RNA sequence: GGGAACGACUCGAGUAGAGUCGAAAAGGCGAUCAGGCCGGCGAGUCCGGCUCCCACGAUGAUAACUUUGUGAUCAGGAAUCAUGAGAUGUUCCUUAUGAGUGUACAGAACUUGGGAGGAUAAAAAAGACAAAACAGUUUUUCGAAACUGUUUUGUCAAAAGAAACAACAACAACAAC
Reactivity to 2A3 in 0.01 (KOAc 150mM, MgCl2 10mM, bicine 150mM(pH8.5), 24C), signal-to-noise 2, nucleotides 027 to 126: g020g010c030g010a060u040c080a000g080g060c010c010g030g000c020g110a080g020u080c040c000g000g000c020u000c020c030c000a010c030g040a030u120g020a020u070a210a060c030u070u070u140g090u070g030a060u050c030a010g080g020a040a030u070c050a070u130g060a040g030a150u060g050u080u040c000c000u050u050a080u140g040a030g000u040g000u040a140c090a060g090a220a010c020u010u050g040g020g000a040g010g000a030u170a020a080a010a010a010a020
Reactivity to DMS in 0.01 (KOAc 150mM, MgCl2 10mM, bicine 150mM(pH8.5), 24C), signal-to-noise 4, nucleotides 027 to 126: g010g010c060g000a060u000c090a160g000g000c020c000g000g010c040g000a150g010u010c020c020g000g000c030u010c000c010c020a120c210g010a090u010g000a050u010a070a110c070u000u000u010g040u000g010a030u000c080a090g010g010a120a050u000c030a050u000g000a120g000a190u010g010u000u000c010c000u000u000a090u010g010a040g010u000g010u010a130c210a100g000a070a070c070u000u000g000g010g000a040g000g000a090u040a000a030a070a100a080a100